[RMDB]
RNA sequence: GGGAACGACUCGAGUAGAGUCGAAAAGAGGAGUAGGAAUAGGGCGAUGAUUGCCAAGCCGCCAUAUGAUCGUGAAGAUAAUCCUGUUCUAAGAUCCCCGAUAUGGUGGACAUUCUUCAUGGUUAGAUAGGAUUACCGGAUUCGUCCGGUAAUCCUAAAAAGAAACAACAACAACAAC
Reactivity to DMS in 0.01 (KOAc 150mM, MgCl2 10mM, bicine 150mM(pH8.5), 24C), signal-to-noise 2, nucleotides 027 to 126: g020a120g000g000a090g020u000a020g020g020a080a080u000a090g030g020g000c040g010a150u000g000a140u000u000g030c060c050a110a110g000c050c020g030c070c040a070u000a050u000g000a020u000c010g030u000g000a010a070g010a000u010a160a220u000c000c030u010g010u000u010c030u200a060a070g000a130u010c030c010c000c090g020a110u000a060u020g000g020u000g010g000a060c120a050u000u000c020u010u000c010a010u000g000g020u000u000a110g000a120
Reactivity to 2A3 in 0.01 (KOAc 150mM, MgCl2 10mM, bicine 150mM(pH8.5), 24C), signal-to-noise 1, nucleotides 027 to 126: g040a000g060g020a030g000u130a000g090g000a110a150u070a070g050g000g000c020g020a030u130g060a080u070u190g020c000c010a080a020g030c030c010g040c000c000a040u080a120u130g040a010u000c030g010u010g060a000a020g010a030u130a030a020u090c000c010u020g010u020u000c030u220a110a040g030a150u040c000c000c000c000g030a080u040a100u260g000g090u110g000g010a050c030a130u080u060c000u030u000c000a030u050g000g060u090u050a120g030a180
Annotation:
This 177-nucleotide RNA was probed chemically with DMS and 2A3. The reactions ran in a buffer of 150 mM KOAc, 10 mM MgCl2 and 150 mM bicine (pH 8.5), at 24 C. The data come from the RNA Mapping Database (RMDB), library OK2TST.